This 177-nucleotide RNA was probed chemically with DMS and 2A3.
RNA sequence: GGGAACGACUCGAGUAGAGUCGAAAAACACUGUACGCAGUGAACCUCUUGCUCUCAGUAACAAGGAUUCAUCCUGUUGUGGUACUCAAAUCCAACAGGGAAUCUCUGUUACUGGGGUUAAGGUUAACUAUCAAUGGGUUUUCGAACCCAUUGAUAGAAAAGAAACAACAACAACAAC
Reactivity to DMS in 0.01 (KOAc 150mM, MgCl2 10mM, bicine 150mM(pH8.5), 24C), signal-to-noise 6, nucleotides 027 to 126: a120c000a010c000u000g010u010a100c210g040c000a000g010u000g010a060a090c000c000u000c040u000u000g000c020u010c000u020c000a000g000u000a000a000c000a010a050g000g000a010u000u000c010a120u020c010c000u000g000u000u000g000u050g010g010u000a080c270u050c300a080a060a030u010c010c000a000a010c010a000g000g000g010a010a000u000c000u010c060u000g010u000u000a000c000u000g010g000g000g000u000u010a020a000g000g000u010u010a100a170
Reactivity to 2A3 in 0.01 (KOAc 150mM, MgCl2 10mM, bicine 150mM(pH8.5), 24C), signal-to-noise 9, nucleotides 027 to 126: a000c000a000c000u020g040u080a030c230g000c100a010g000u020g050a080a080c000c000u030c040u020u050g010c010u020c010u010c060a000g000u000a000a000c010a030a050g010g000a000u010u010c020a120u140c060c000u010g010u020u010g090u270g030g030u070a120c060u060c260a100a180a070u020c000c000a000a000c000a000g010g000g000a000a000u000c020u000c000u000g000u000u000a000c000u000g000g000g000g000u010u140a010a000g010g010u040u080a050a040
The reactions ran in a buffer of 150 mM KOAc, 10 mM MgCl2 and 150 mM bicine (pH 8.5), at 24 C. The data come from the RNA Mapping Database (RMDB), libraries RFM100 and RFMREP. Reactivities are given for positions 27 through 126.